An RNA of 177 nucleotides, treated with 2A3 and DMS and read out base by base. It was measured as part of the RMDB library OK1LIB. For 2A3 the reverse transcriptase was SuperScript II with manganese.
[RMDB]
RNA sequence: GGGAACGACUCGAGUAGAGUCGAAAAGAAGGACAUAACGCGAAGCAGCAGAGAGAAGACUGGAGUGACGCGAAUCACUAGAUGUCAACGACGGCAAGAGAGAGCCGAAGGAGACGAUCCUUAGGAGAAUUUACUCCUGGUUCGCCAGGAGUAAAUUAAAAGAAACAACAACAACAAC
Reactivity to 2A3 in 0.01 (KOAc 150mM, MgCl2 10mM, bicine 150mM(pH8.5), 24C), signal-to-noise 6, nucleotides 027 to 126: g070a020a010g060g010a030c030a090u190a130a040c080g000c040g080a050a010g040c040a010g040c040a020g060a000g010a020g040a200a040g050a030c050u030g030g090a050g040u030g020a030c010g010c000g080a030a030u070c020a020c100u070a080g010a130u080g020u030c010a020a020c020g030a000c000g010g020c010a110a010g080a030g010a010g010a010g210c000c000g000a010a000g010g000a010g010a010c070g040a050u000c000c000u040u030a050g020g030a090g040
Reactivity to DMS in 0.01 (KOAc 150mM, MgCl2 10mM, bicine 150mM(pH8.5), 24C), signal-to-noise 6, nucleotides 027 to 126: g000a090a050g000g000a070c100a060u020a080a080c080g000c050g020a100a170g050c050a030g030c040a060g000a110g020a090g000a070a100g020a060c040u000g000g020a060g000u000g000a130c050g010c120g020a110a120u000c080a070c060u010a090g000a090u030g030u010c010a030a190c060g000a260c050g000g000c030a070a090g010a170g010a160g000a140g000c000c000g000a040a170g000g000a280g000a050c110g000a050u000c020c010u000u020a100g020g010a120g000